[RMDB]
RNA sequence: GGGAACGACUCGAGUAGAGUCGAAAAAACGAGACUGGCUUAGAGCUGACAUUGACCAACACCAGCAUUAUAAAUCACAAAUUCUGUAACCUGUCAGAUGCUCACAAACGUAAUCUGUAUGACCACGGUUGCUUGUGUGGUUCGCCACACAAGCAACAAAAGAAACAACAACAACAAC
Reactivity to 2A3 in 0.01 (KOAc 150mM, MgCl2 10mM, bicine 150mM(pH8.5), 24C), signal-to-noise 2, nucleotides 027 to 126: a000a010c060g020a040g120a070c050u060g000g110c090u070u080a000g000a000g140c000u000g050a000c010a120u010u080g130a120c010c000a000a040c000a000c010c020a000g000c030a010u000u070a070u130a070a110a080u240c020a040c050a060a110a030u230u040c020u030g100u140a080a050c020c020u000g020u000c000a000g050a080u000g030c000u000c050a080c010a030a180a010c030g070u050a010a010u020c020u040g120u100a000u130g040a020c000c080a000c010g090
Overview:
This 177-nucleotide RNA was probed chemically with 2A3. Values are in units of 0.01, from 0 to 300, in steps of 10. Source: RMDB library OK1LIB, as collected in RNAgym. Conditions: 150 mM KOAc, 10 mM MgCl2 and 150 mM bicine (pH 8.5), 24 C.